[RMDB]
The record gives the reactivity of an RNA of 177 nucleotides to DMS and 2A3. For DMS the reverse transcriptase was MarathonRT. Conditions: 150 mM KOAc, 10 mM MgCl2 and 150 mM bicine (pH 8.5), 24 C. The data come from the RNA Mapping Database (RMDB), library TTRDEL. Values cover nucleotides 27 to 126. For DMS, 797 sequencing reads were counted.
RNA sequence: GGGAACGACUCGAGUAGAGUCGAAAAGAUAUGGAUACGUGAUGCCAACAGCUUGCCAUCGGAAACGAUGGUCAAGACAUGGCAUCAUCCUAAGUCAAAGGAAUGCAACGUUCGCGUUGCAUUCCAACGUCGCGAAUACGUUCGCGUAUUCGCGACGAAAAGAAACAACAACAACAAC
Reactivity to DMS in 0.01 (KOAc 150mM, MgCl2 10mM, bicine 150mM(pH8.5), 24C), signal-to-noise 1, nucleotides 027 to 126: g000a120u010a300u030g020g000a220u000a090c300g030u000g000a020u000g020c000c000a030a060c270a120g000c000u000u030g000c000c000a000u000c000g000g020a090a100a100c000g010a000u000g000g000u010c030a000a010g020a030c160a050u000g000g030c000a000u000c000a060u000c010c020u000a080a080g000u040c130a110a120a090g000g010a020a030u000g010c000a000a000c000g070u000u020c300g010c060g000u000u000g000c000a000u000u010c020c000a000a070
Reactivity to 2A3 in 0.01 (KOAc 150mM, MgCl2 10mM, bicine 150mM(pH8.5), 24C), signal-to-noise 1, nucleotides 027 to 126: g060a020u100a040u160g070g010a070u100a100c240g150u150g050a000u000g000c030c010a060a020c060a260g100c000u010u010g020c070c010a010u000c040g000g000a060a070a030c000g020a010u000g000g000u040c000a000a000g020a020c000a040u060g000g000c000a000u000c000a010u020c000c010u030a100a030g070u010c100a110a040a150g000g000a000a000u000g010c000a010a020c030g040u030u080c300g010c010g160u000u010g000c000a000u000u060c000c010a000a010